Conditions: 150 mM KOAc, 10 mM MgCl2 and 150 mM bicine (pH 8.5), 24 C.
Structure probing data (2A3 and DMS) for a 177-nucleotide construct.
The data come from the RNA Mapping Database (RMDB), library OK2TRN.
For DMS the reverse transcriptase was MarathonRT.
RNA sequence: GGGAACGACUCGAGUAGAGUCGAAAACGUCGUCGAACGCACGCGUGCACUCGAGCAACUGCGCGCGCGUGACGACGCGCGACGGCGAGCCGAGAAAGAACGCGAGCAGGUUGAAUUCGCCGACCGACCUAAUACCACCUUUCGAGGUGGUAUUAGGAAAAGAAACAACAACAACAAC
Reactivity to 2A3 in 0.01 (KOAc 150mM, MgCl2 10mM, bicine 150mM(pH8.5), 24C), signal-to-noise 3, nucleotides 027 to 126: c030g000u020c000g020u000c000g010a060a020c060g000c020a000c010g020c000g020u010g000c040a060c130u040c040g100a170g080c020a080a170c060u120g000c030g000c010g000c000g000c000g140u030g070a140c080g070a030c000g000c000g010c000g010a090c020g020g010c010g030a020g000c000c010g020a010g020a040a140a010g040a030a030c010g000c020g030a020g010c040a060g060g100u160u140g110a150a150u100u030c010g000c010c010g010a010c010c050g030a070
Reactivity to DMS in 0.01 (KOAc 150mM, MgCl2 10mM, bicine 150mM(pH8.5), 24C), signal-to-noise 5, nucleotides 027 to 126: c150g010u000c010g010u010c010g030a050a050c110g000c000a080c010g010c010g030u000g010c070a120c030u000c040g000a120g020c030a300a080c060u010g000c060g000c000g010c000g020c020g010u010g000a110c300g020a050c010g000c030g030c030g000a080c010g000g000c050g010a160g000c030c010g000a020g000a100a080a070g010a050a050c040g020c000g000a060g030c020a150g020g010u000u010g000a090a260u010u000c020g000c040c020g000a040c030c070g010a210